[RMDB]
RNA sequence: GGGAACGACUCGAGUAGAGUCGAAAAAAAUCUUAGCCCUUAUUGCAACAAACUACUUUUAUUUUCUAACUUUGAACAUAGAGCCAGACUGACGUCAGUCUAUCCAGGAAACUGUCCAGAAGGCAAAGGAAACAGUGGUUGUUGAUUAAGGUUGGAAGAGUAUCGUAAUAUUCGUAUUACGAUACUCAAAAGAAACAACAACAACAAC
Reactivity to 2A3 in 0.01 (KOAc 150mM, MgCl2 10mM, bicine 150mM(pH8.5), 24C), signal-to-noise 3, nucleotides 027 to 156: a020a000a020u090c050u040u100a130g040c000c000c010u010u030a100u090u140g050c020a010a000c020a060a190a070c020u030a020c030u060u170u120u120a130u160u080u020u040c040u030a060a160c050u140u090u210g040a080a020c020a060u180a090g090a020g060c010c000a010g060a070c010u030g010a020c080g060u100c010a030g010u010c000u040a080u030c090c020a010g050g040a090a080a050c030u030g040u010c030c010a040g040a040a010g060g010c100a120a030a040g040g020a030a040a020c020a020g010u040g000g010u020u000g000u010u000g010a040u040u020a030a030g080g020u040u090g110g040a160a110
Reactivity to DMS in 0.01 (KOAc 150mM, MgCl2 10mM, bicine 150mM(pH8.5), 24C), signal-to-noise 1, nucleotides 027 to 156: a030a070a090u000c020u000u010a130g020c110c000c010u000u000a050u000u000g000c000a020a000c020a070a040a040c000u000a010c010u000u000u010u000a090u030u060u010u010c040u000a050a080c030u000u010u000g010a060a030c050a130u010a140g020a200g010c010c040a060g020a060c020u000g020a090c050g030u010c240a160g030u010c020u000a100u000c010c010a110g010g020a090a060a120c070u000g010u010c020c000a100g040a040a060g010g000c030a000a080a030g010g010a010a010a070c050a040g010u000g020g030u000u010g000u000u020g010a090u000u010a020a010g000g020u020u000g000g030a030a170
The record gives the reactivity of an RNA of 207 nucleotides to 2A3 and DMS. 2A3 adducts were read by reverse transcription with SuperScript II with manganese. The DMS profile rests on 2,251 reads. Reactivities are given for positions 27 through 156. The data come from the RNA Mapping Database (RMDB), library OK3TST.